An RNA of 177 nucleotides, treated with DMS and read out base by base.
The DMS profile rests on 478 reads.
Reactivities are given for positions 27 through 126.
The reactions ran in a buffer of 150 mM KOAc, 10 mM MgCl2 and 150 mM bicine (pH 8.5), at 24 C.
[RMDB]
RNA sequence: GGGAACGACUCGAGUAGAGUCGAAAAAAUAAGAGUUUGGAUUAACCUAUAGGGAAUUAGCGAUCAAGAAUACAACCUAAGGACCUGGUUGACUUAAUUAUUCCAAAGGUUGGUGGAAGCUAGCGAAGACAGGUAGAGUGUUCGCACUCUACCUGUCAAAAGAAACAACAACAACAAC
Reactivity to DMS in 0.01 (KOAc 150mM, MgCl2 10mM, bicine 150mM(pH8.5), 24C), signal-to-noise 1, nucleotides 027 to 126: a130a020u010a090a060g000a110g010u000u000u000g000g000a100u040u000a090a040c020c010u040a130u010a230g000g010g040a210a070u000u010a010g000c050g000a060u020c050a150a010g010a160a150u000a040c050a050a110c090c090u020a010a260g000g000a130c300c100u000g000g000u000u010g010a160c090u000u000a080a090u040u000a110u000u000c010c000a160a060a020g000g000u010u000g000g050u000g000g000a040a060g000c070u000a060g000c100g000a130a130